[RMDB]
RNA sequence: GGGAACGACUCGAGUAGAGUCGAAAAUCCCAUAGGUUGCCGAAUCCGAAAGGUCGGGAGGAACCGCUUUUUGGGGUUAAUCUGCAGUGAAGCUGCAGUAGGGAUACCUUCUGUCCCGCACCCGACAGCUAACUCCAGAGGCAAUAAAGGAAGGAGAAGUAUUAUGAUACUUCGGUAUCAUAAUACUAAAAGAAACAACAACAACAAC
Reactivity to 2A3 in 0.01 (KOAc 150mM, MgCl2 10mM, bicine 150mM(pH8.5), 24C), signal-to-noise 2, nucleotides 027 to 156: u010c000c000c000a020u060a030g050g000u010u100g070c020c000g080a100a100u020c040c000g070a150a080a020g120g040u060c030g000g010g010a030g010g020a050a050c030c000g000c060u090u150u020u050u100g050g000g000g000u020u020a060a060u020c010u000g000c010a020g030u050g260a120a030g160c020u000g000c000a000g000u000a020g000g000g030a020u120a140c020c000u020u040c020u020g000u000c000c000c000g000c000a060c000c050c000g020a080c060a010g000c000u000a020a010c010u010c030c000a000g030a050g050g000c030a000a020u180a120a080a010g010g020a010a020g030g020a070g040a070
Reactivity to DMS in 0.01 (KOAc 150mM, MgCl2 10mM, bicine 150mM(pH8.5), 24C), signal-to-noise 2, nucleotides 027 to 156: u000c010c000c010a230u000a070g000g000u000u000g000c010c020g030a200a300u000c010c000g020a060a080a090g050g040u000c000g040g030g020a130g040g010a140a110c150c030g010c100u000u000u000u000u000g060g040g000g030u000u000a100a110u020c010u010g010c080a030g030u000g020a240a230g020c000u020g010c010a040g040u030a030g020g040g000a080u010a040c050c100u010u000c030u010g000u010c280c000c000g000c090a120c010c010c030g010a100c090a060g000c090u000a090a150c010u000c010c020a080g000a140g020g000c040a080a100u000a080a080a140g000g000a050a090g040g000a220g010a160